[RMDB]
RNA sequence: GGGAACGACUCGAGUAGAGUCGAAAAUGUGACAUGUUCGCAUGUCACAAGCCAGGUAGUACCUAUCUCAAUUACCUGUACAGGCCAUGGUCUGGAUAGGAAAGCUCUACCUAUUCGUAGGUAGAAACCUCGGAAAAAUUUUCGAAUUUUUCCGAGGAAAAGAAACAACAACAACAAC
Reactivity to 2A3 in 0.01 (KOAc 150mM, MgCl2 10mM, bicine 150mM(pH8.5), 24C), signal-to-noise 1, nucleotides 027 to 126: u050g000u000g000a020c000a030u000g020u060u080c300g010c200a000u020g020u020c000a020c000a010a030g050c030c050a050g020g020u040a030g030u130a160c000c010u000a040u050c050u060c040a080a300u130u090a200c000c000u000g030u090a050c040a040g080g000c050c020a180u300g090g020u010c020u020g040g000a000u000a050g010g000a050a080a000g000c040u010c010u020a020c000c010u010a020u000u000c120g020u000a000g000g050u000a000g040a040a050a030